[RMDB]
RNA sequence: GGGAACGACUCGAGUAGAGUCGAAAAUCAAUAGAGCUAGUUUGCGUCAAAUUUUUGACGUAGCCCCCAUUGAACUCGAAAAUAAAUUCACACCUUUGAGUGUGGAGUCUACACCAGUUGAACCUCCUACGACGGAGCUUCGGCUCCGUCAAAAGAAACAACAACAACAAC
Reactivity to DMS in 0.01 (KOAc 150mM, MgCl2 10mM, bicine 150mM(pH8.5), 24C), signal-to-noise 4, nucleotides 027 to 129: u000c010a080a060u050a090g020a120g020c120u070a060g080u010u030u120g010c110g000u000c030a010a010a300u000u070u070u000u000g030a020c020g040u020a090g030c000c000c000c040c070a100u090u000g000a020a010c040u030c030g030a080a040a060a150u030a130a010a120u030u050c030a030c010a000c000c010u010u040u040g000a110g040u010g030u020g010g040a030g000u050c020u010a090c080a050c000c200a060g010u130u000g030a050a090c050c040u000c040c000u000a060c300
Reactivity to 2A3 in 0.01 (KOAc 150mM, MgCl2 10mM, bicine 150mM(pH8.5), 24C), signal-to-noise 2, nucleotides 027 to 129: u110c000a010a120u150a050g150a000g000c000u090a010g080u020u110u070g000c030g020u000c050a000a000a090u200u150u000u000u050g040a010c000g000u000a000g000c020c000c000c020c000a020u010u060g140a130a060c000u000c060g040a080a000a000a000u290a000a030a000u070u050c030a010c000a000c050c090u180u200u200g080a090g020u040g000u000g000g000a010g000u000c000u040a020c010a040c100c000a000g000u010u050g070a000a000c000c000u000c000c020u060a000c060